Structure probing data (DMS and 2A3) for a 207-nucleotide construct. The data come from the RNA Mapping Database (RMDB), library M2RFPK. For 2A3, 3,886 sequencing reads were counted. DMS adducts were read by reverse transcription with MarathonRT.
RNA sequence: GGGAACGACUCGAGUAGAGUCGAAAAGUGCCUCGUCGGCCCGGCAUGCCAACCUGAUCCGAAGUUCAAGGUGGUUUCUCUGGCCUUCCAGAGAGAUGCGCGUCGGAAGAACGGACGAACAAACCUUAAAACAAAACGACGUUCGCGUCGUUUUGAAGAAUCACAAAUACUUCGGUAUUUGUGAUUCAAAAGAAACAACAACAACAAC
Reactivity to DMS in 0.01 (KOAc 150mM, MgCl2 10mM, bicine 150mM(pH8.5), 24C), signal-to-noise 1, nucleotides 027 to 156: g010u000g000c060c030u010c070g020u000c010g030g030c030c000c030g020g070c010a070u010g020c070c050a050a020c050c010u010g000a100u000c090c050g010a120a170g000u000u010c050a080a060g030g000u000g010g020u000u000u000c000u000c020u000g000g010c250c140u000u020c010c000a000g000a020g000a010g010a060u010g000c020g050c040g060u010c020g030g030a100a120g000a110a070c000g000g000a090c010g020a090a120c060a050a140a120c030c010u000u000a040a090a110a160c030a020a000a030a030c000g010a010c000g000u000u010c300g020c000g030u000c000g040u000u010u010u010g020a030a150
Reactivity to 2A3 in 0.01 (KOAc 150mM, MgCl2 10mM, bicine 150mM(pH8.5), 24C), signal-to-noise 5, nucleotides 027 to 156: g040u030g080c000c010u020c020g040u000c020g090g020c040c010c020g010g010c030a020u120g040c010c010a090a130c030c010u010g000a040u010c010c020g080a050a020g040u060u030c070a050a010g010g000u020g000g000u000u080u000c000u000c000u000g010g000c030c050u270u170c020c010a000g000a000g010a000g000a060u140g070c070g000c040g080u010c020g020g030a070a010g020a080a050c070g060g030a010c010g040a060a010c050a080a070a100c030c030u180u260a050a140a030a070c010a000a010a000a000c000g010a000c000g010u040u080c200g000c010g080u000c000g000u000u000u000u000g000a020a000